[RMDB]
RNA sequence: GGGAACGACUCGAGUAGAGUCGAAAAUUCACACUGGGCCAAGAGCAGCUGCCAUUGCAGAUUCGAGUCACGUCCUUUUUUCCUUCCUUCUCCUUCUUGGAGUUACAACAGAAGCUGGGGAGGUGAGCCAAGGUAUCCUGUUCGCAGGAUACCUUGGAAAAGAAACAACAACAACAAC
Reactivity to 2A3 in 0.01 (KOAc 150mM, MgCl2 10mM, bicine 150mM(pH8.5), 24C), signal-to-noise 3, nucleotides 027 to 126: u070u030c050a040c020a020c050u050g020g050g000c020c010a100a020g030a010g080c050a030g000c040u060g000c000c030a170u090u240g050c030a010g010a050u090u040c010g020a000g000u010c000a010c080g070u050c000c000u030u080u010u020u040u060c020c000u050u020c000c000u020u070c000u030c010c000u020u080c010u030u160g010g000a100g030u140u100a120c090a100a000c010a020g030a070a000g010c100u140g000g000g030g010a000g000g030u080g040a010g010
Reactivity to DMS in 0.01 (KOAc 150mM, MgCl2 10mM, bicine 150mM(pH8.5), 24C), signal-to-noise 1, nucleotides 027 to 126: u030u000c030a100c060a070c060u000g000g050g000c040c040a100a060g020a070g000c000a060g010c000u010g000c030c110a040u000u020g000c100a120g000a100u000u010c030g000a010g040u010c010a050c170g000u020c030c020u000u000u000u000u000u000c030c010u000u010c010c000u000u010c000u000c070c000u000u000c030u010u000g000g040a100g020u010u020a090c240a100a080c080a020g000a000a020g030c100u060g000g010g000g000a040g000g000u000g000a070g040

Conditions: 150 mM KOAc, 10 mM MgCl2 and 150 mM bicine (pH 8.5), 24 C. Structure probing data (2A3 and DMS) for a 177-nucleotide construct. It was measured as part of the RMDB libraries RFM100 and RFMREP. As a SHAPE reagent, 2A3 marks flexible, mostly unpaired nucleotides at the ribose 2'-OH.